Source information:
Structure probing data (DMS and 2A3) for a 177-nucleotide construct. Reactivities are given for positions 27 through 126. The RNA was probed in 150 mM KOAc, 10 mM MgCl2 and 150 mM bicine (pH 8.5) at 24 C.
RNA sequence: GGGAACGACUCGAGUAGAGUCGAAAAUCUAUCACCAGCCCAUGUUUACGACACGAAUGGGGUGUUGCAAAUUACGUAUAGCUCUUGCAACAUCGUGUCGAAACGUUCCCAAGCUAUACGCCACAAAACUACCGAUAAGAUUCGUCUUAUCGGUAGUAAAAGAAACAACAACAACAAC
Reactivity to DMS in 0.01 (KOAc 150mM, MgCl2 10mM, bicine 150mM(pH8.5), 24C), signal-to-noise 6, nucleotides 027 to 126: u010c080u000a070u000c060a060c060c040a080g000c010c010c030a090u010g010u000u000u000a140c010g020a010c000a020c000g000a080a090u000g020g010g010g020u000g010u010u000g000c000a020a050a160u010u010a110c040g000u000a010u000a010g010c000u000c230u000u000g000c010a000a010c000a030u000c010g010u010g000u000c010g010a030a040a170c060g010u000u000c010c000c000a170a040g010c010u000a000u000a010c000g030c200c190a060c160a060a050a080
Reactivity to 2A3 in 0.01 (KOAc 150mM, MgCl2 10mM, bicine 150mM(pH8.5), 24C), signal-to-noise 8, nucleotides 027 to 126: u030c010u020a110u080c030a020c100c020a020g050c000c010c000a030u080g080u080u110u070a070c010g010a000c000a000c020g110a240a190u260g110g100g000g020u010g010u000u000g010c010a010a060a080u190u080a070c010g010u000a000u000a020g000c010u040c020u160u010g000c000a010a000c000a010u020c030g000u000g010u000c000g020a040a030a000c030g000u000u000c000c000c000a000a010g000c000u020a010u000a010c010g020c020c010a110c030a010a090a050